[RMDB]
RNA sequence: GGGAACGACUCGAGUAGAGUCGAAAAGUACGAUACGUUUCAGUACACGUUGCGACUCCCUGUUCAGCGACUAGGGGCUCUGCCUGACUCUUCUUCUGGUUGCGUCCUCAGGAACAGCGUAUCGCCAGGCAAUUGUUAUGUUCGCAUAACAAUUGCCAAAAGAAACAACAACAACAAC
Reactivity to DMS in 0.01 (KOAc 150mM, MgCl2 10mM, bicine 150mM(pH8.5), 24C), signal-to-noise 2, nucleotides 027 to 126: g010u000a110c000g000a040u000a000c070g000u030u040u010c160a140g010u000a030c090a100c060g000u010u000g000c020g000a050c090u030c070c030c010u060g010u000u020c080a160g000c080g070a070c020u000a200g010g020g020g010c020u050c030u000g000c040c000u000g000a070c160u000c030u000u000c130u000u000c020u000g000g030u000u000g040c090g000u010c010c070u010c060a100g050g000a140a090c220a070g010c030g000u020a030u000c010g030c080c060a030
Reactivity to 2A3 in 0.01 (KOAc 150mM, MgCl2 10mM, bicine 150mM(pH8.5), 24C), signal-to-noise 5, nucleotides 027 to 126: g070u050a010c010g000a020u010a030c030g020u040u090u230c080a010g010u050a030c050a010c050g040u030u040g000c020g030a020c020u050c010c020c000u030g030u020u090c050a040g030c030g090a050c040u050a060g000g000g020g000c010u020c020u060g020c020c020u070g050a080c020u040c040u270u020c030u060u010c010u060g030g000u040u030g030c030g020u030c000c000u060c040a040g040g040a030a030c030a020g010c020g020u010a020u050c030g000c060c040a030
Conditions: 150 mM KOAc, 10 mM MgCl2 and 150 mM bicine (pH 8.5), 24 C. Chemical mapping of a 177-nucleotide RNA with DMS and 2A3. Reactivities are given for positions 27 through 126. It was measured as part of the RMDB library OK1LIB.